[RMDB]
RNA sequence: GGGAACGACUCGAGUAGAGUCGAAAAGAUAUGGACGUUGUUGAUAUGCGAUCUUCACGGGAGAUUACAUUCGGAAACGAAUGGGGAUCAUCGAUCGUGGGAUCGCAUAUCAACAACGUCCUAAGUCCAUAAUAGAGGUCUUCGGACCUCUAUUAUGAAAAGAAACAACAACAACAAC
Reactivity to DMS in 0.01 (KOAc 150mM, MgCl2 10mM, bicine 150mM(pH8.5), 24C), signal-to-noise 6, nucleotides 027 to 126: g010a120u010a300u010g010g000a010c010g020u000u000g020u000u010g010a010u000a010u000g010c010g000a010u000c000u000u020c010a000c000g010g000g000a300g000a020u000u010a090c000a020u000u000c000g000g000a130a130a290c010g000a010a010u000g000g000g020g020a090u010c170a110u000c080g010a290u010c000g040u000g000g000g000a010u000c000g020c000a000u000a000u000c000a000a000c000a000a000c000g010u000c000c010u000a010a080g000u010c040
This 177-nucleotide RNA was probed chemically with DMS. The RNA was probed in 150 mM KOAc, 10 mM MgCl2 and 150 mM bicine (pH 8.5) at 24 C. For DMS the reverse transcriptase was MarathonRT.